[RMDB]
RNA sequence: GGGAACGACUCGAGUAGAGUCGAAAAGAAGGUGACGAAAGACCACCUCAGGUCAGAGGAAGAAAACACUAGAUGAAGUGACAUCAAAGAACGAACAGCUGAGUUCGACAGCAAAAGUCACCGAAAAGGGUAUCAAUCACUUCGGUGAUUGAUACCCAAAAGAAACAACAACAACAAC
Reactivity to 2A3 in 0.01 (KOAc 150mM, MgCl2 10mM, bicine 150mM(pH8.5), 24C), signal-to-noise 1, nucleotides 027 to 126: g030a010a000g000g000u000g000a000c000g100a040a000a010g050a000c000c000a140c000c060u090c120a040g130g020u000c000a000g000a010g130g020a210a010g030a140a150a000a000c020a000c040u140a110g000a180u120g060a000a040g160u110g130a000c000a060u000c000a120a120a170g080a030a030c000g000a000a070c000a000g060c110u270g020a070g300u080u050c000g040a000c040a000g000c000a000a000a000a000g000u000c000a000c000c000g000a000a050a000a110
Reactivity to DMS in 0.01 (KOAc 150mM, MgCl2 10mM, bicine 150mM(pH8.5), 24C), signal-to-noise 1, nucleotides 027 to 126: g000a000a230g040g090u000g000a080c010g000a070a140a060g000a170c140c000a190c030c000u000c220a050g020g000u000c160a110g000a000g160g080a080a120g000a000a120a110a120c000a060c000u000a110g000a000u000g000a110a220g190u000g000a000c000a100u000c000a020a020a080g000a000a050c080g000a060a000c070a140g000c080u050g000a050g000u000u000c120g000a300c090a060g000c040a030a060a280a090g000u000c000a000c000c000g000a050a080a300a090
Conditions: 150 mM KOAc, 10 mM MgCl2 and 150 mM bicine (pH 8.5), 24 C. Structure probing data (2A3 and DMS) for a 177-nucleotide construct. For 2A3 the reverse transcriptase was SuperScript II with manganese.